Chemical mapping of a 177-nucleotide RNA with DMS and 2A3.

[RMDB]
RNA sequence: GGGAACGACUCGAGUAGAGUCGAAAAGUAGAUAAGGGAAGUCGGCAAAAUAGAUCCGUAACUUAGGGAAAAGGAUUGGCUCAUAGGGCAGGGUUUGUUGGGCCUUUGAUGGAUCUUUUGGAAUCUGAUCUUCACGAGACUUCGGUCUCGUGAAGAUAAAAGAAACAACAACAACAAC
Reactivity to DMS in 0.01 (KOAc 150mM, MgCl2 10mM, bicine 150mM(pH8.5), 24C), signal-to-noise 1, nucleotides 027 to 126: g000u050a100g000a200u000a050a190g030g000g000a090a080g000u050c020g000g000c270a090a060a230a110u080a040g030a070u000c000c030g000u020a050a300c150u000u070a020g000g000g060a110a040a070a110g000g000a030u000u020g000g050c080u020c000a100u000a060g020g000g000c030a000g000g000g000u000u060u050g000u000u000g000g090g040c000c000u000u000u060g000a190u000g000g000a060u000c000u000u050u000u000g000g000a000a140u000c020u000g050
Reactivity to 2A3 in 0.01 (KOAc 150mM, MgCl2 10mM, bicine 150mM(pH8.5), 24C), signal-to-noise 1, nucleotides 027 to 126: g070u090a000g000a080u010a030a000g000g060g000a000a080g000u080c000g000g120c170a120a120a000a000u110a050g010a100u040c050c020g210u130a020a040c000u070u050a050g000g010g020a000a000a000a130g050g030a120u050u090g000g000c000u030c060a000u050a160g020g140g000c030a060g000g000g010u000u080u000g120u130u020g000g000g030c000c000u220u000u070g130a080u150g000g000a010u020c000u000u300u000u020g040g010a110a190u000c010u040g020
The data come from the RNA Mapping Database (RMDB), library RFM100.
For 2A3, 328 sequencing reads were counted.
For DMS the reverse transcriptase was MarathonRT.
For DMS, 930 sequencing reads were counted.